[RMDB]
RNA sequence: GGGAACGACUCGAGUAGAGUCGAAAAGAUAGUAGCAUGUCGACUCGAAAAAUCUGUGAGGACGAGCAGGAAAAAUGAUGCGGAAAAGUCCGAACGCAUCGAUGAGGAAGAUAUGGAAAAUACUAGAGGGUUUACUAUUCUUCGGAAUAGUAAACCCAAAAGAAACAACAACAACAAC
Reactivity to DMS in 0.01 (KOAc 150mM, MgCl2 10mM, bicine 150mM(pH8.5), 24C), signal-to-noise 2, nucleotides 027 to 126: g040a260u010a100g000u080a040g050c000a000u000g010u030c010g010a260c000u000c010g020a060a030a030a090a070u040c040u010g000u000g000a210g000g000a030c020g010a100g010c010a040g010g000a010a030a030a080a080u010g060a060u000g010c050g000g010a090a010a070a110g030u020c020c060g020a170a090c050g030c040a000u000c000g000a100u000g000a030g000g000a110a080g000a000u000a020u010g020g000a010a050a050a180u010a040c000u000a030g000a300
Reactivity to 2A3 in 0.01 (KOAc 150mM, MgCl2 10mM, bicine 150mM(pH8.5), 24C), signal-to-noise 1, nucleotides 027 to 126: g140a000u080a030g040u010a000g090c010a010u000g000u030c000g000a010c000u000c000g060a000a000a000a040a080u040c020u010g090u090g050a080g100g070a040c060g000a000g000c030a000g000g060a090a000a000a000a000u100g020a010u010g000c000g070g100a000a240a000a050g180u070c130c050g000a050a000c000g000c000a000u000c000g010a080u220g000a000g090g000a170a000g030a010u050a000u030g000g000a070a080a130a000u010a050c040u000a010g010a050
The record gives the reactivity of an RNA of 177 nucleotides to DMS and 2A3. The 2A3 profile rests on 840 reads. The reactions ran in a buffer of 150 mM KOAc, 10 mM MgCl2 and 150 mM bicine (pH 8.5), at 24 C. It was measured as part of the RMDB library OK1LIB.